[RMDB]
RNA sequence: GGGAACGACUCGAGUAGAGUCGAAAAUGUAAGGUUACUUCGGUAACCUUACAAAAAAAGAUAUGGAAUACAUACAACAGCCUGUCUAUCGGAAACGAUAGCAGGACAUGUAUGUUCCUAAGUCAAAAACCGCAAACUGUUUCGACAGUUUGCGGAAGAUAGUUGUUUUCUUCGGAAAACAACUAUCAAAAGAAACAACAACAACAAC
Reactivity to DMS in 0.01 (KOAc 150mM, MgCl2 10mM, bicine 150mM(pH8.5), 24C), signal-to-noise 1, nucleotides 027 to 156: u000g020u020a010a010g020g020u010u000a000c000u000u000c300g010g080u020a000a030c000c010u000u010a010c000a000a000a020a080a040a090a100g000a110u000a210u000g010g010a050a050u010a070c000a030u000a000c000a030a140c130a110g010c010c000u000g000u000c010u000a000u000c010g020g010a220a150a140c010g010a030u000a010g000c000a000g000g020a040c060a090u000g020u010a020u010g050u000u020c000c000u010a050a180g040u000c040a090a090a100a170a160c000c010g010c000a000a020a030c020u010g010u000u010u010c260g030a200c000a000g020u000u010u000g000c000g000g000a000a000
Reactivity to 2A3 in 0.01 (KOAc 150mM, MgCl2 10mM, bicine 150mM(pH8.5), 24C), signal-to-noise 4, nucleotides 027 to 156: u060g010u000a000a000g010g010u000u020a020c020u030u110c300g010g000u000a000a000c000c000u000u000a000c000a000a000a000a000a000a000a000g040a030u080a040u080g020g010a050a050u130a220c000a000u010a010c010a160a010c020a150g100c000c000u110g060u300c000u010a000u000c000g020g040a090a020a060c000g000a000u000a000g010c000a000g000g020a020c000a000u000g000u000a010u000g000u000u000c010c000u030a110a030g020u030c040a040a000a010a160a090c000c020g030c010a010a000a000c010u010g020u050u140u120c140g100a030c010a000g000u000u020u000g000c000g000g000a000a000